[RMDB]
RNA sequence: GGGAACGACUCGAGUAGAGUCGAAAAGAUAUGGAUCGCUUGGACCCGUAACAACGAAGAACUCGGAAACGAGGGAGUUGUACGGCUAGCGAUCCUAAGUCAAAACCACAUCCUUCGGGAUGUGGAAGCACUAUAAAUCCUUCGGGAUUUAUAGUGCAAAAGAAACAACAACAACAAC
Reactivity to 2A3 in 0.01 (KOAc 150mM, MgCl2 10mM, bicine 150mM(pH8.5), 24C), signal-to-noise 3, nucleotides 027 to 126: g010a020u070a030u170g000g000a010u010c010g010c040u050u200g080g130a210c030c000c000g020u070a240a090c020a010a000c020g240a300a100g010a080a000c000u010c000g020g040a060a070a040c010g000a000g000g020g030a030g000u010u010g010u000a010c010g000g010c000u000a010g010c020g000a000u000c000c000u000a000a000g030u000c020a000a050a030a140c010c000a000c000a000u020c000c000u050u100c300g150g000g000a000u010g000u000g010g000a010a000
Reactivity to DMS in 0.01 (KOAc 150mM, MgCl2 10mM, bicine 150mM(pH8.5), 24C), signal-to-noise 2, nucleotides 027 to 126: g020a040u000a300u000g020g010a010u000c000g020c010u000u010g040g000a070c300c000c040g000u010a060a050c000a000a000c000g000a130a160g010a130a180c000u010c000g000g000a090a110a230c010g010a020g000g000g000a060g000u000u000g000u000a060c020g000g000c030u000a010g030c010g020a000u000c000c010u010a000a080g020u000c020a070a060a110a200c010c000a000c000a000u000c000c000u000u000c170g000g010g000a020u000g000u000g000g000a030a080
Chemical mapping of a 177-nucleotide RNA with 2A3 and DMS.
The DMS profile rests on 1,546 reads.
The 2A3 profile rests on 4,481 reads.
The reactions ran in a buffer of 150 mM KOAc, 10 mM MgCl2 and 150 mM bicine (pH 8.5), at 24 C.